[RMDB]
An RNA of 177 nucleotides, treated with 2A3 and DMS and read out base by base. 2A3 adducts were read by reverse transcription with SuperScript II with manganese.
RNA sequence: GGGAACGACUCGAGUAGAGUCGAAAAAUGGUCCAAAUCGUAUUUCAAGAACCAUGAUGCAUUCUGCUUUAUUAAAGGAAGCCACAGCCCGGUCAUUACUCGUUAGCGGUUAUGAGCUUGAAUAUCAGGAGUAAUGAGGAUUCGUCCUCAUUACUCCAAAAGAAACAACAACAACAAC
Reactivity to 2A3 in 0.01 (KOAc 150mM, MgCl2 10mM, bicine 150mM(pH8.5), 24C), signal-to-noise 2, nucleotides 027 to 126: a000u040g010g020u030c010c000a030a020a070u110c070g020u080a100u040u110u060c040a070a050g010a090a010c000c000a040u060g010a040u080g050c020a110u100u060c010u040g020c000u040u120u100a140u090u120a200a090a040g060g000a080a020g000c000c020a040c020a050g040c030c000c010g050g010u000c000a000u030u150a030c010u040c050g110u110u130a030g030c030g060g030u020u010a030u060g040a030g040c040u060u040g040a050a020u140a100u190c110a040
Reactivity to DMS in 0.01 (KOAc 150mM, MgCl2 10mM, bicine 150mM(pH8.5), 24C), signal-to-noise 3, nucleotides 027 to 126: a060u000g010g000u000c020c020a090a090a070u010c150g000u010a140u000u000u000c080a050a070g010a080a040c060c020a020u000g010a140u000g020c030a080u010u000c030u010g000c100u000u000u000a100u000u010a090a090a100g000g000a050a060g010c020c100a060c100a090g020c040c030c050g010g000u000c030a030u000u010a060c050u000c040g000u000u010a060g020c050g000g020u000u000a030u010g020a090g020c030u000u000g000a040a060u010a080u020c170a150

For 2A3, 1,481 sequencing reads were counted. The reactions ran in a buffer of 150 mM KOAc, 10 mM MgCl2 and 150 mM bicine (pH 8.5), at 24 C.